Structure probing data (DMS and 2A3) for a 177-nucleotide construct. The RNA was probed in 150 mM KOAc, 10 mM MgCl2 and 150 mM bicine (pH 8.5) at 24 C. For 2A3 the reverse transcriptase was SuperScript II with manganese. For 2A3, 10,391 sequencing reads were counted. Values cover nucleotides 27 to 126. The DMS profile rests on 11,714 reads. DMS adducts were read by reverse transcription with MarathonRT.
RNA sequence: GGGAACGACUCGAGUAGAGUCGAAAACUAUUUAUAGACAGAACAGUGGAAAACGUAUAUCGCUAUAAACCUUACACCCCGAUUCUUCCAGUCGUACUAUUCCACAUAGGCGAGGCAUAAGCGAAAGACCUACGAUAUCAUUCGUGAUAUCGUAGGUAAAAGAAACAACAACAACAAC
Reactivity to DMS in 0.01 (KOAc 150mM, MgCl2 10mM, bicine 150mM(pH8.5), 24C), signal-to-noise 6, nucleotides 027 to 126: c060u030a070u020u010u010a050u010a060g010a060c110a190g000a080a040c110a110g000u000g010g000a100a070a110a100c100g000u000a050u020a060u000c060g000c010u000a040u000a040a050a080c100c060u000u010a090c100a060c040c020c020c020g000a080u020u020c040u000u000c030c020a080g000u000c010g000u010a060c040u010a110u020u010c020c040a050c110a120u020a040g000g010c050g000a070g010g000c090a060u000a050a100g020c020g000a060a140a090g010
Reactivity to 2A3 in 0.01 (KOAc 150mM, MgCl2 10mM, bicine 150mM(pH8.5), 24C), signal-to-noise 6, nucleotides 027 to 126: c000u010a070u040u080u050a120u040a040g100a020c080a030g060a140a040c040a090g040u070g070g090a120a130a040a010c010g050u080a060u020a020u150c010g000c020u020a010u060a080a050a040c010c000u020u080a020c020a050c020c000c000c010g050a060u040u020c020u070u010c030c010a030g010u020c010g020u020a080c030u040a040u070u040c020c030a050c030a090u030a030g030g010c020g010a020g020g000c040a050u070a090a050g030c030g080a060a030a010g090